RNA sequence: GGGAACGACUCGAGUAGAGUCGAAAAGGAGUUUAUUUAGAUCCAGAAACGGGAGAACAAUUAAAUCAGAGUGUUAAUGAAGAUGGAAAAACACUAUCAACCCUUAACUACCAUGAAACCCAAAGGGAAAGAAAUGGCUAUGAUGUACCACCACCUAGUCUCCUUAUGACUUCGGUCAUAAGGAGACAAAAGAAACAACAACAACAAC
Reactivity to 2A3 in 0.01 (KOAc 150mM, MgCl2 10mM, bicine 150mM(pH8.5), 24C), signal-to-noise 1, nucleotides 027 to 156: g030g010a040g000u060u120u000a130u000u140u020a050g050a080u070c000c020a050g180a010a060a060c180g020g000g010a100g010a030a100c120a100a130u170u180a140a080a070u130c080a030g040a000g110u030g000u110u100a030a060u170g060a020a090g040a010u010g010g000a010a000a000a140a000c050a000c050u080a050u060c050a010a080c000c000c010u020u020a040a040c040u080a040c020c010a110u080g050a100a090a030c020c000c070a080a000a000g050g000g010a080a100a000g020a000a050a010u060g000g000c000u020a020u090g090a010u050g090u040a050c000c020a020c050c000a010c020c000u000a010